[RMDB]
RNA sequence: GGGAACGACUCGAGUAGAGUCGAAAAUUAAAGUGCUAGCUUGGGACUUUUGCCAGAACUUUUGGGAAAGCAAAAAAGUUGCACUGGGGUUACUAAGCACAGAGCAUGUGGGUCUGAACACAUUGAUGAUCACCUUUGUCACUCUCUAGGGAGGGCACAGUACGGACGUAUUCGUACGUCCGUACUGAAAAGAAACAACAACAACAAC
Reactivity to 2A3 in 0.01 (KOAc 150mM, MgCl2 10mM, bicine 150mM(pH8.5), 24C), signal-to-noise 1, nucleotides 027 to 156: u070u030a090a060a000g030u000g000c020u040a050g000c010u010u010g110g020g050a180c040u120u050u120u150g090c010c020a060g020a200a200c120u150u110u090u050g010g000g010a000a110a000g010c000a100a120a010a000a000a000g020u120u160g000c040a020c040u000g030g000g000g000u050u030a050c050u030a100a070g000c040a030c010a070g080a000g030c000a020u020g050u050g060g030g000u040c030u030g070a030a030c120a010c040a170u060u150g050a070u100g040a080u140c030a080c010c030u000u120u000g060u040c030a180c300u030c000u000c010u040a120g120g000g000a000g000g000g010c020a000
Background:
The record gives the reactivity of an RNA of 207 nucleotides to 2A3. The RNA was probed in 150 mM KOAc, 10 mM MgCl2 and 150 mM bicine (pH 8.5) at 24 C. It was measured as part of the RMDB library OK3TST.